[RMDB]
RNA sequence: GGGAACGACUCGAGUAGAGUCGAAAAUAAUCAAGAUGAAUCGUUUUUAGUUUGCUUGCUUACCUUACGGGCCAGUAUGAGAUCUACUUGAAUCUUUUUAUGUAGGCAGACAGCGACGGAAUUUAAAGAUGCUAUGCUACUUCGGUAGCAUAGCAUCAAAAGAAACAACAACAACAAC
Reactivity to DMS in 0.01 (KOAc 150mM, MgCl2 10mM, bicine 150mM(pH8.5), 24C), signal-to-noise 1, nucleotides 027 to 126: u030a130a160u010c050a230a010g000a070u080g000a160a100u010c030g000u000u040u000u070u040a050g020u000u010u000g030c000u070u010g040c000u000u040a050c110c030u020u050a090c160g010g000g140c010c030a100g010u000a070u000g000a060g000a060u000c080u030a030c120u000u010g050a040a000u000c000u000u000u000u000u000a020u090g010u000a010g000g000c000a000g000a070c000a080g000c100g000a090c040g010g000a100a170u010u090u040a010a020a140
Reactivity to 2A3 in 0.01 (KOAc 150mM, MgCl2 10mM, bicine 150mM(pH8.5), 24C), signal-to-noise 2, nucleotides 027 to 126: u220a000a090u170c100a000a050g110a110u150g060a090a120u070c020g030u000u000u000u000u110a070g010u000u020u080g050c020u000u000g020c010u030u030a050c000c040u020u070a070c120g000g040g010c050c020a020g020u030a100u040g070a050g000a040u010c010u060a120c060u130u010g010a090a100u020c000u020u130u050u050u030a030u100g010u000a010g020g000c020a000g000a020c020a030g000c000g000a000c020g010g040a040a020u090u170u080a080a020a020